[RMDB]
RNA sequence: GGGAACGACUCGAGUAGAGUCGAAAAGUUGCUCGAACUCCAACUUAAAUGUUCAGAGAUAAGUGCUGGCUGAUAGCAGUCGAUUAACGCCUUCAUUUGCUGAAGAUGCUGUUUGUUCAGCGGAUCAAUUGUUCUGUAUAUUCGUAUACAGAACAAUAAAAGAAACAACAACAACAAC
Reactivity to 2A3 in 0.01 (KOAc 150mM, MgCl2 10mM, bicine 150mM(pH8.5), 24C), signal-to-noise 9, nucleotides 027 to 126: g030u030u070g030c020u030c060g040a030a020c010u030c060c030a060a050c070u120u200a090a150a170u230g020u070u060c050a040g030a010g020a100u070a160a090g070u080g140c010u030g030g000c000u020g020a040u050a030g050c020a030g170u090c030g030a030u110u160a120a040c060g020c010c000u050u050c050a130u100u100u300g050c070u040g010a040a010g020a050u060g010c020u030g060u030u050u060g070u090u060c000a000g000c060g020g020a080u100c050a050
Reactivity to DMS in 0.01 (KOAc 150mM, MgCl2 10mM, bicine 150mM(pH8.5), 24C), signal-to-noise 9, nucleotides 027 to 126: g010u000u010g010c040u010c050g010a070a100c070u000c150c050a060a070c070u010u010a070a110a100u000g010u000u000c070a070g010a080g000a080u010a060a100g020u010g010c020u000g010g010c020u000g010a080u000a050g020c020a050g010u010c060g010a140u010u010a090a110c160g010c140c070u000u000c090a050u000u000u010g020c100u000g000a050a060g000a130u000g010c030u000g010u000u000u000g010u000u000c020a030g020c020g000g000a080u000c130a080
Structure probing data (2A3 and DMS) for a 177-nucleotide construct.
Values cover nucleotides 27 to 126.